An RNA of 177 nucleotides, treated with DMS and 2A3 and read out base by base. 2A3 is a SHAPE reagent: it acylates the 2'-hydroxyl of flexible nucleotides of all four kinds.

RNA sequence: GGGAACGACUCGAGUAGAGUCGAAAAGCCCCCAGCCGACGGCGCUAUCCCGGGGACGGGUCGUAACCCGCUCGUCCCCGCCUUUACACCUUCCGGAAGGAGUUCAGCCCCCCUCCGUCGGAAGGUCGAACCAUUUUAAUUUCGAUUAAAAUGGUUCAAAAGAAACAACAACAACAAC
Reactivity to DMS in 0.01 (KOAc 150mM, MgCl2 10mM, bicine 150mM(pH8.5), 24C), signal-to-noise 7, nucleotides 027 to 126: g000c040c010c010c050c040a080g010c040c040g010a080c090g000g020c040g010c060u010a080u010c030c070c010g010g010g000g000a020c000g010g000g000u010c090g000u010a130a220c150c110c050g020c010u000c000g000u000c000c000c000c000g020c070c020u010u010u010a140c220a080c010c000u000u000c000c000g010g010a060a120g010g010a030g020u010u020c160a140g000c010c000c000c030c150c000u000c000c000g000u000c010g000g000a010a000g010g020u000c080
Reactivity to 2A3 in 0.01 (KOAc 150mM, MgCl2 10mM, bicine 150mM(pH8.5), 24C), signal-to-noise 4, nucleotides 027 to 126: g020c000c000c000c000c010a010g020c020c020g050a050c030g010g030c010g010c040u060a070u120c010c010c010g000g000g000g000a000c000g000g000g010u130c030g020u030a060a100c010c030c000g000c000u000c000g000u000c010c000c000c000g000c000c000u050u050u040a050c040a010c020c000u000u010c000c000g030g020a140a170g100g000a040g010u140u230c120a090g010c000c000c000c000c000c000u000c000c000g050u030c000g000g000a000a000g000g000u000c000
Background:
The reactions ran in a buffer of 150 mM KOAc, 10 mM MgCl2 and 150 mM bicine (pH 8.5), at 24 C.